[RMDB]
RNA sequence: GGGAACGACUCGAGUAGAGUCGAAAAUGGCGCGUUUCGGUCAACAUCAAGGGUCUGUUGUACCGGCUAUAGAUUUACCUGAAUUGCGUAGUGUAUUGCAGCAGUUUGACUCGUUUGGUAAGCGGUGGCACUGUACAGUUUUCGAACUGUACAGUGCAAAAGAAACAACAACAACAAC
Reactivity to DMS in 0.01 (KOAc 150mM, MgCl2 10mM, bicine 150mM(pH8.5), 24C), signal-to-noise 3, nucleotides 027 to 126: u020g010g000c030g030c080g020u010u010u010c080g020g030u000c050a070a040c130a040u010c080a120a120g010g010g000u010c100u000g010u000u000g010u000a060c080c060g000g020c070u000a060u000a100g000a110u000u000u000a080c090c050u010g010a070a070u000u000g010c040g010u000a060g000u010g010u000a080u010u000g010c060a080g020c030a010g020u000u000u000g010a090c090u000c070g010u010u010u000g010g010u000a080a120g000c060g010g000u000g010
Reactivity to 2A3 in 0.01 (KOAc 150mM, MgCl2 10mM, bicine 150mM(pH8.5), 24C), signal-to-noise 3, nucleotides 027 to 126: u070g030g000c040g000c030g020u040u110u090c010g020g000u020c020a030a010c010a090u100c040a060a130g120g010g080u000c020u020g040u070u020g030u060a060c030c000g030g000c040u050a010u040a080g110a090u050u090u150a110c010c040u040g070a090a060u110u060g000c080g020u030a020g040u050g050u110a130u130u120g030c000a030g000c000a020g050u040u100u100g050a030c010u020c100g050u050u070u030g050g010u020a060a010g000c050g050g020u070g080